Background: An RNA of 177 nucleotides, treated with DMS and 2A3 and read out base by base. DMS adducts were read by reverse transcription with MarathonRT. It was measured as part of the RMDB library M2PK50. 2A3 adducts were read by reverse transcription with SuperScript II with manganese.
[RMDB]
RNA sequence: GGGAACGACUCGAGUAGAGUCGAAAAGACCGUUAGUUCGCUAACGGUCAAAUUAAAUCAGCGGUAACGAGGCGUAAAAUAUUACCGCUGAACGCCUCGUUAAAAACAGGAGCUUCGGCUCCUGUAAGAUAUUACGUACCUUCGGGUACGUAAUAUCAAAAGAAACAACAACAACAAC
Reactivity to DMS in 0.01 (KOAc 150mM, MgCl2 10mM, bicine 150mM(pH8.5), 24C), signal-to-noise 3, nucleotides 027 to 126: g000a020c000c000g020u010u000a010g010u010u010c250g010c010u010a000a000c000g010g000u000c000a020a020a030u010u010a060a090a130u010c070a060g020c070g010g010u000a020a020c060g020a030g000g000c020g010u010a040a090a080a080u010a060u010u000a110c020c040g010c060u000g000a050a040c030g000c010c000u000c020g010u000u010a030a070a050a090a030c000a000g010g000a010g010c000u000u010c200g050g010c000u000c000c000u000g010u000a010a050
Reactivity to 2A3 in 0.01 (KOAc 150mM, MgCl2 10mM, bicine 150mM(pH8.5), 24C), signal-to-noise 4, nucleotides 027 to 126: g000a000c000c000g000u000u000a010g000u000u060c250g000c140u000a000a000c000g020g000u000c000a000a000a010u010u010a010a010a020u080c030a010g080c030g150g030u020a010a010c020g000a010g040g000c020g020u040a040a050a140a080u260a080u130u120a050c020c020g010c040u010g020a010a000c000g000c000c000u000c010g020u010u070a060a070a010a000a000c000a000g000g000a000g010c000u060u090c170g110g000c000u000c020c000u000g000u000a000a000